Annotation
An RNA of 177 nucleotides, treated with 2A3 and DMS and read out base by base. For DMS, 1,719 sequencing reads were counted.

[RMDB]
RNA sequence: GGGAACGACUCGAGUAGAGUCGAAAAGAUAUGGAGGCUUCUUUUGACGCGAUGUAGUCGGAAACGACUACAGUCGCGAUAAGAAGCUCCUAAGUCAAAGUUGCGAAUAGUUCGCUAUUCGCAACAAGCAUAAAGCAUCGUUCGCGAUGCUUUAUGCAAAAGAAACAACAACAACAAC
Reactivity to 2A3 in 0.01 (KOAc 150mM, MgCl2 10mM, bicine 150mM(pH8.5), 24C), signal-to-noise 1, nucleotides 027 to 126: g000a000u050a020u100g040g000a060g120g200c060u010u030c010u070u100u160u240g290a130c170g000c000g010a000u020g010u020a010g030u010c020g020g000a020a070a000c010g010a010c010u000a000c010a000g020u070c000g000c040g000a010u020a000a000g010a000a000g000c000u000c000c010u020a060a010g000u020c040a040a000a300g010u010u000g010c010g000a020a010u000a010g030u030u090c220g000c160u000a000u010u000c010g000c000a010a000c000a000a000
Reactivity to DMS in 0.01 (KOAc 150mM, MgCl2 10mM, bicine 150mM(pH8.5), 24C), signal-to-noise 2, nucleotides 027 to 126: g000a020u000a190u010g000g000a000g010g010c010u000u010c000u010u010u000u000g000a150c080g020c040g000a070u000g010u000a000g000u010c010g000g000a100a050a150c000g010a040c000u000a000c010a010g010u000c000g020c000g000a020u010a020a000g010a010a000g000c000u000c000c000u000a030a190g010u000c020a080a070a200g010u000u000g000c000g010a020a010u000a000g010u000u000c220g000c010u000a000u000u010c000g020c000a000a000c010a050a060
Annotation:
The reactions ran in a buffer of 150 mM KOAc, 10 mM MgCl2 and 150 mM bicine (pH 8.5), at 24 C. Values cover nucleotides 27 to 126. It was measured as part of the RMDB library TTRDEL.